[RMDB]
RNA sequence: GGGAACGACUCGAGUAGAGUCGAAAAACUCGAUGGCUACGGCCAUCGAGAAGUGUGAGCAGGCAUCUUCUCAGCCUACAUGUGGAUUCCUAAAUCUGCAGGCUGGUUAGAUGGUUGUCAUGCAUAAGAAAAUCAACUUUUUCGAAAGUUGAUUUUCAAAAGAAACAACAACAACAAC
Reactivity to 2A3 in 0.01 (KOAc 150mM, MgCl2 10mM, bicine 150mM(pH8.5), 24C), signal-to-noise 3, nucleotides 027 to 126: a010c000u000c010g010a010u000g000g000c020u010a050c280g080g000c000c000a000u000c000g000a000g000a010a010g010u010g000u010g000a060g040c000a000g070g030c010a000u010c000u030u010c020u000c010a000g010c000c010u060a100c080a130u220g010u020g000g020a020u030u050c000c020u070a160a170a020u010c000u010g000c000a020g020g000c000u000g000g000u010u010a000g000a010u010g080g300u020u000g020u020c010a000u030g010c010a060u110a280a000
Reactivity to DMS in 0.01 (KOAc 150mM, MgCl2 10mM, bicine 150mM(pH8.5), 24C), signal-to-noise 3, nucleotides 027 to 126: a100c000u000c000g020a010u000g000g020c000u010a070c230g050g000c000c000a000u000c010g010a000g000a020a040g000u000g020u000g000a120g010c000a000g000g000c000a010u000c000u000u000c030u000c010a020g020c010c000u000a100c160a130u020g040u000g000g010a070u000u000c270c190u000a070a060a050u000c020u000g000c000a030g000g020c000u000g010g000u000u000a010g000a010u000g000g010u000u000g000u000c020a020u000g010c000a080u000a100a100